[RMDB]
RNA sequence: GGGAACGACUCGAGUAGAGUCGAAAAAUUUCUUCCAUUUUUGACGGUGAUGAGCGGGUGGAAACUCACGUACUUCAGUCACACCUGGUCCUAGUUUGCGGAGUGCGCUCGGGAGGUAAACAACGGCCACACCUACAGCGUUCGCGCUGUAGGUGUGAAAAGAAACAACAACAACAAC
Reactivity to 2A3 in 0.01 (KOAc 150mM, MgCl2 10mM, bicine 150mM(pH8.5), 24C), signal-to-noise 2, nucleotides 027 to 126: a020u090u080u060c060u120u000c070c060a160u190u110u020u020u100g050a040c100g050g020u070g040a160u060g020a070g050c070g000g070g020u040g070g020a050a070a010c070u040c010a070c070g070u060a100c050u140u060c050a150g000u060c030a010c000a020c000c030u000g020g010u000c000c010u000a070g040u000u140u060g080c050g020g000a090g000u040g030c050g020c000u040c000g010g000g010a070g000g010u070a100a020a070c060a030a020c010g060g000c020
Reactivity to DMS in 0.01 (KOAc 150mM, MgCl2 10mM, bicine 150mM(pH8.5), 24C), signal-to-noise 1, nucleotides 027 to 126: a140u000u000u000c030u030u000c030c000a220u040u000u000u000u010g040a050c060g010g040u000g020a060u040g000a080g000c080g000g010g000u010g000g010a160a090a060c040u000c000a060c080g020u000a030c120u000u000c040a090g000u000c020a090c090a000c030c040u000g020g010u000c000c070u000a230g010u000u000u000g020c020g030g020a070g000u000g000c070g000c080u000c090g000g000g000a070g050g040u000a050a000a050c110a080a180c100g000g000c120